About this RNA
Source: RMDB library OK1LIB, as collected in RNAgym. An RNA of 177 nucleotides, treated with DMS and 2A3 and read out base by base. For 2A3, 1,236 sequencing reads were counted. The reactions ran in a buffer of 150 mM KOAc, 10 mM MgCl2 and 150 mM bicine (pH 8.5), at 24 C. High DMS reactivity at an A or C suggests that its Watson-Crick edge is free.
RNA sequence: GGGAACGACUCGAGUAGAGUCGAAAAUUGGCGUCCCGCAGCAUGAAAGCCGCGGACCCGUGCCGGCGUAAUGACCGGUACACCGCCAAGCCGUGACGGUAGUUGCACGCAGUCGAUGUCGCGCAUCGCGGGAAAGGGAGUUCGCUCCCUUUCCCGCAAAAGAAACAACAACAACAAC
Reactivity to DMS in 0.01 (KOAc 150mM, MgCl2 10mM, bicine 150mM(pH8.5), 24C), signal-to-noise 1, nucleotides 027 to 126: u000u000g010g000c000g030u020c020c000c000g010c010a080g000c000a130u110g040a180a130a200g000c020c000g000c000g060g010a080c060c070c180g060u000g000c000c000g000g000c060g000u000a070a130u000g000a150c000c000g120g000u000a000c060a040c120c000g050c000c000a000a080g030c090c000g010u000g000a080c110g000g080u000a060g000u000u000g000c010a180c150g000c030a090g000u000c060g030a010u040g000u000c030g030c080g000c090a140u000c050
Reactivity to 2A3 in 0.01 (KOAc 150mM, MgCl2 10mM, bicine 150mM(pH8.5), 24C), signal-to-noise 3, nucleotides 027 to 126: u040u030g050g000c050g060u100c090c000c020g020c010a030g000c020a030u300g160a190a130a010g030c020c020g000c000g000g020a090c030c090c030g020u010g000c000c000g020g000c000g060u120a200a170u230g080a240c000c000g000g000u010a010c010a010c010c010g000c020c000a000a060g090c010c010g040u040g020a020c020g050g050u080a070g050u120u090g030c060a010c040g020c020a010g020u090c030g030a060u030g020u050c010g010c000g000c020a090u090c100